[RMDB]
This 177-nucleotide RNA was probed chemically with DMS and 2A3. Values cover nucleotides 27 to 126.
RNA sequence: GGGAACGACUCGAGUAGAGUCGAAAAUAAUAAAUUGUUAGCCAAGAAGGAGCUUUCAGGCCAGUGCUUUAAAAUACUCUAUAAGGGCAAUGUGACGCAUGAUGCUAGCUCUGCCAUUAAUAGACCAACGUAUUAAUAAGUUCGCUUAUUAAUACGUAAAAGAAACAACAACAACAAC
Reactivity to DMS in 0.01 (KOAc 150mM, MgCl2 10mM, bicine 150mM(pH8.5), 24C), signal-to-noise 8, nucleotides 027 to 126: u010a080a110u010a050a070a130u000u000g010u000u000a070g010c040c040a110a110g010a100a110g000g010a100g010c050u000u000u000c080a090g010g010c040c050a080g020u000g010c040u000u000u000a060a070a100a080u000a060c160u000c010u000a050u000a080a070g000g000g010c020a010a050u000g010u000g010a100c200g000c020a100u010g020a100u010g010c020u000a280g000c020u000c080u000g010c050c020a030u000u000a050a050u010a050g000a090c130c100a070
Reactivity to 2A3 in 0.01 (KOAc 150mM, MgCl2 10mM, bicine 150mM(pH8.5), 24C), signal-to-noise 5, nucleotides 027 to 126: u160a010a030u090a030a040a060u120u070g030u060u080a010g000c010c010a070a050g080a060a030g090g030a070g010c000u050u050u100c060a030g040g020c020c020a030g030u030g070c000u050u060u110a030a150a020a040u130a080c010u000c010u040a040u030a150a060g030g000g000c010a010a030u060g000u020g030a010c060g020c030a060u230g060a060u190g220c010u000a010g000c000u040c080u020g000c010c000a010u050u060a040a130u030a040g030a000c020c030a020